Notes:
The record gives the reactivity of an RNA of 207 nucleotides to 2A3 and DMS. Reactivities are rounded to 0.1 and cut off at 0 and 3. The 2A3 profile rests on 1,193 reads. Conditions: 150 mM KOAc, 10 mM MgCl2 and 150 mM bicine (pH 8.5), 24 C. In probing experiments dimethyl sulfate is read out at A N1 and C N3, which are open when not base-paired.
[RMDB]
RNA sequence: GGGAACGACUCGAGUAGAGUCGAAAAUGCACUAGAAGCUGAGGAGGCAGCAUUGGUCUCAGAUGUAGCCGCAUUGGUCGCACUUGUAGAAGCGGUAGAUGCAGACGUUGCAGCAUUGGUUGCCUGAGUUGUAGCUGUAGAAGCAGAAGUAGCUGCGUAUUAGGACAAACUUCGGUUUGUCCUAAUAAAAAGAAACAACAACAACAAC
Reactivity to 2A3 in 0.01 (KOAc 150mM, MgCl2 10mM, bicine 150mM(pH8.5), 24C), signal-to-noise 2, nucleotides 027 to 156: u120g020c010a000c060u040a000g040a210a050g080c060u060g010a020g020g010a020g030g010c020a020g000c010a020u030u130g030g030u000c030u000c060a010g010a100u050g070u110a030g020c000c030g000c050a030u030u070g110g030u080c000g000c010a020c030u050u070g020u090a090g040a170a010g010c000g000g050u040a020g000a100u090g000c020a000g010a060c110g040u050u060g010c010a000g000c020a030u050u080g050g050u080u050g000c010c020u030g020a020g020u080u050g040u070a010g050c100u030g030u060a080g040a150a000g010c000a000g010a150a000g020u170a020g040c000u000g000c000g020
Reactivity to DMS in 0.01 (KOAc 150mM, MgCl2 10mM, bicine 150mM(pH8.5), 24C), signal-to-noise 2, nucleotides 027 to 156: u000g000c030a150c000u000a100g030a110a090g000c010u000g010a100g010g030a150g030g010c050a070g010c030a130u000u000g010g010u000c050u000c040a070g000a130u000g000u000a090g020c020c030g010c040a140u000u020g020g040u000c020g020c030a060c030u010u000g030u000a130g030a080a060g020c030g000g030u010a070g000a090u000g020c010a060g020a070c070g010u000u000g010c000a100g030c040a150u000u000g030g030u000u010g020c000c040u000g000a190g020u000u000g010u000a040g020c010u010g010u000a100g000a060a150g010c010a080g000a050a130g020u000a140g000c000u000g010c000g020